Conditions: 150 mM KOAc, 10 mM MgCl2 and 150 mM bicine (pH 8.5), 24 C. Structure probing data (DMS and 2A3) for a 177-nucleotide construct. Source: RMDB library OK2TST, as collected in RNAgym. Values cover nucleotides 27 to 126. For DMS the reverse transcriptase was MarathonRT.

RNA sequence: GGGAACGACUCGAGUAGAGUCGAAAAACUCGUUCAGCCAUGAAGGCGUCGGGUGCCUUCACUGUUCCCACAUCGAUGUCAGUGAUCACCAACCCGUGUGGCACGUGGCGACCGGCGACCGGCGAGCUACUAAUUCGGUCUUCGGACCGAAUUAGUAAAAAGAAACAACAACAACAAC
Reactivity to DMS in 0.01 (KOAc 150mM, MgCl2 10mM, bicine 150mM(pH8.5), 24C), signal-to-noise 2, nucleotides 027 to 126: a080c040u000c030g020u000u010c070a160g020c020c020a130u020g020a160a080g020g010c030g020u000c060g050g020g010u010g000c020c000u010u010c030a030c090u010g000u000u000c000c010c010a120c230a100u020c100g010a100u000g010u000c050a040g010u000g000a060u010c070a070c050c070a080a110c070c070c070g050u000g020u000g010g010c060a060c100g020u010g020g010c040g010a040c060c020g000g000c000g020a110c080c020g020g010c050g010a050g030c160
Reactivity to 2A3 in 0.01 (KOAc 150mM, MgCl2 10mM, bicine 150mM(pH8.5), 24C), signal-to-noise 2, nucleotides 027 to 126: a000c040u040c020g040u140u070c060a000g010c000c030a060u170g120a080a090g010g030c010g000u010c010g030g020g070u040g020c010c000u070u070c020a050c080u030g020u060u030c010c070c010a060c030a070u140c100g130a060u150g070u120c010a030g030u020g040a080u110c020a020c030c040a070a100c020c020c000g020u040g010u010g110g000c020a030c170g080u060g020g000c030g070a120c030c040g010g000c000g160a210c010c000g000g000c020g020a000g050c050